Conditions: 150 mM KOAc, 10 mM MgCl2 and 150 mM bicine (pH 8.5), 24 C. This 177-nucleotide RNA was probed chemically with 2A3 and DMS. The DMS profile rests on 3,141 reads. DMS adducts were read by reverse transcription with MarathonRT.

RNA sequence: GGGAACGACUCGAGUAGAGUCGAAAAGAUAUGGAACGUCCAGCGUUGAUCACUGGGUCGGAAACGACCCUGGUGGGAGCUGUCUUCCUAAGUCAAACGUGGCCUCCUGUUCGCAGGAGGCCACGAACCACUUAUAUACGUUCGCGUAUAUAAGUGGAAAAGAAACAACAACAACAAC
Reactivity to 2A3 in 0.01 (KOAc 150mM, MgCl2 10mM, bicine 150mM(pH8.5), 24C), signal-to-noise 2, nucleotides 027 to 126: g010a010u050a010u140g020g030a050a020c210g070u070c210c080a020g000c010g300u300u190g070a110u070c000a000c020u000g030g000g000u000c010g000g000a020a070a030c000g010a000c020c040c000u010g000g060u020g000g070g040a020g000c010u000g030u020c000u000u000c000c000u030a130a030g030u020c040a110a050a090c030g030u040g000g030c010c050u000c000c000u080g080u170u200c300g030c090a000g000g000a000g000g000c010c020a010c010g000a010a000
Reactivity to DMS in 0.01 (KOAc 150mM, MgCl2 10mM, bicine 150mM(pH8.5), 24C), signal-to-noise 2, nucleotides 027 to 126: g000a050u010a300u020g000g000a010a030c200g000u000c260c050a010g010c010g030u010u020g010a070u010c000a010c010u000g000g000g000u010c010g000g010a060a090a190c010g000a010c010c000c000u000g010g010u000g000g000g020a050g020c000u000g000u000c090u000u000c000c000u000a050a170g000u010c040a070a070a170c040g040u020g000g000c000c000u000c000c010u000g000u000u010c200g010c000a000g010g000a030g000g000c000c000a000c000g010a040a030